[RMDB]
RNA sequence: GGGAACGACUCGAGUAGAGUCGAAAAAGAAAUAGCGUACUGUACACUCAGAAUGUACGCUAACUAAGUGUGUGUUCUAUAACGUCCAAUUGAACACACACACAGUUGGACCGAGUGUAAAAAAAAAGCAUUACAGAGUGUUCGCACUCUGUAAUGCAAAAGAAACAACAACAACAAC
Reactivity to DMS in 0.01 (KOAc 150mM, MgCl2 10mM, bicine 150mM(pH8.5), 24C), signal-to-noise 1, nucleotides 027 to 126: a100g020a070a100a060u000a020g030c030g030u000a000c000u050g000u020a030c020a020c020u000c020a100g000a090a080u000g030u000a020c020g000c000u000a010a010c030u000a170a230g020u020g050u000g010u000g010u000u020c000u010a030u010a070a180c190g000u050c050c200a040a070u020u000g020a000a000c000a000c030a000c000a000c000a040c140a000g020u000u020g000g000a110c010c070g000a040g000u000g000u000a000a000a000a000a070a050a090a170a190
Reactivity to 2A3 in 0.01 (KOAc 150mM, MgCl2 10mM, bicine 150mM(pH8.5), 24C), signal-to-noise 2, nucleotides 027 to 126: a000g100a000a070a030u070a010g000c010g000u000a000c020u100g040u130a010c010a020c020u040c030a060g100a170a030u060g030u010a000c000g000c010u000a010a000c000u000a090a090g020u030g000u000g010u000g000u010u000c020u070a110u040a210a170c100g220u030c080c000a070a040u040u060g000a000a020c010a000c020a000c000a000c000a000c010a020g050u050u050g030g010a000c010c100g010a020g000u010g000u080a070a030a000a010a000a010a000a020a010
Source information:
The record gives the reactivity of an RNA of 177 nucleotides to DMS and 2A3. 2A3 is a SHAPE reagent: it acylates the 2'-hydroxyl of flexible nucleotides of all four kinds. The reactions ran in a buffer of 150 mM KOAc, 10 mM MgCl2 and 150 mM bicine (pH 8.5), at 24 C.